An RNA of 207 nucleotides, treated with 2A3 and DMS and read out base by base. For DMS the reverse transcriptase was MarathonRT. Reactivities are given for positions 27 through 156. The 2A3 profile rests on 3,868 reads.

RNA sequence: GGGAACGACUCGAGUAGAGUCGAAAAUCGGUGCGGAAGUUCGCGCUUCCGUGAAACGCGAAAAUCGGACGGUGGCUGCAAGUCGCAUCGCAAAACCGCGGCAAGUGGAGUUAGCGAGAGGAGGCUGAAACCAUCCAACACUUCGGUGUUGGAUGAAGAUUUACGGAUUGUUCGCAAUCCGUAAAUCAAAAGAAACAACAACAACAAC
Reactivity to 2A3 in 0.01 (KOAc 150mM, MgCl2 10mM, bicine 150mM(pH8.5), 24C), signal-to-noise 4, nucleotides 027 to 156: u090c020g000g000u040g000c010g000g020a020a050g030u100u180c070g020c030g020c040u040u010c000c010g020u050g030a090a080a030c130g010c030g050a010a000a010a120u110c040g000g020a020c030g040g010u020g030g020c060u090g000c070a080a020g030u040c020g010c030a050u030c020g020c050a070a090a010a020c030c030g020c010g040g010c090a110a050g040u040g040g040a070g020u060u070a020g030c020g030a020g020a050g080g030a030g030g000c030u020g040a040a020a010c010c010a000u000c000c000a000a000c000a000c000u040u090c220g060g000u000g000u000u000g000g000a000u000g000a000a000
Reactivity to DMS in 0.01 (KOAc 150mM, MgCl2 10mM, bicine 150mM(pH8.5), 24C), signal-to-noise 2, nucleotides 027 to 156: u000c030g000g030u000g010c030g020g020a060a170g030u020u000c150g000c200g020c000u160u000c010c130g000u000g000a060a040a020c030g050c000g020a060a020a080a170u010c070g030g010a110c030g010g030u000g020g020c020u010g000c020a080a040g010u000c010g030c040a110u000c050g030c040a100a050a080a100c040c040g000c050g030g010c040a080a100g030u010g010g000a100g050u000u000a080g010c000g010a050g010a100g010g010a080g010g050c010u010g000a090a070a140c120c000a010u000c000c010a020a030c000a000c000u000u010c300g040g010u000g020u010u000g010g000a000u000g000a010a040